Chemical mapping of a 177-nucleotide RNA with DMS and 2A3. It was measured as part of the RMDB library OK2TST. Reactivities are given for positions 27 through 126. For 2A3 the reverse transcriptase was SuperScript II with manganese.
[RMDB]
RNA sequence: GGGAACGACUCGAGUAGAGUCGAAAAGUGCAGGCAGGUUUCGAGCCUUACCAAUUUGAUACCUACUUUGAACAACGUGAUUUGGAUGUGGUGAGCUACAACUACGGCGUUGGCAAUUUAAAUCCAGCGAAAGCGAUAUUUUCGAAUAUCGCUUUCGAAAAGAAACAACAACAACAAC
Reactivity to DMS in 0.01 (KOAc 150mM, MgCl2 10mM, bicine 150mM(pH8.5), 24C), signal-to-noise 7, nucleotides 027 to 126: g010u010g030c080a040g010g000c070a040g000g010u000u000u000c040g000a100g020c050c040u000u010a090c120c140a110a110u000u000u010g010a070u000a070c040c010u010a040c040u000u000u010g010a120a150c060a040a050c070g030u010g010a120u000u010u000g010g010a090u000g020u010g000g010u000g000a110g020c030u000a080c090a070a050c050u000a060c150g010g010c040g010u000u000g010g010c060a060a050u000u010u000a060a090a110u010c030c050a140g010
Reactivity to 2A3 in 0.01 (KOAc 150mM, MgCl2 10mM, bicine 150mM(pH8.5), 24C), signal-to-noise 4, nucleotides 027 to 126: g060u040g040c010a000g000g000c020a010g000g060u000u030u110c030g040a020g000c010c000u000u040a030c010c010a030a060u080u040u080g060a050u080a050c000c000u020a050c040u050u070u150g060a140a030c030a010a020c030g030u050g100a180u050u040u160g090g010a070u060g020u020g060g040u040g030a050g060c020u040a040c010a050a010c020u070a040c040g050g010c030g010u010u000g010g000c000a000a000u020u010u030a100a100a050u040c030c020a010g070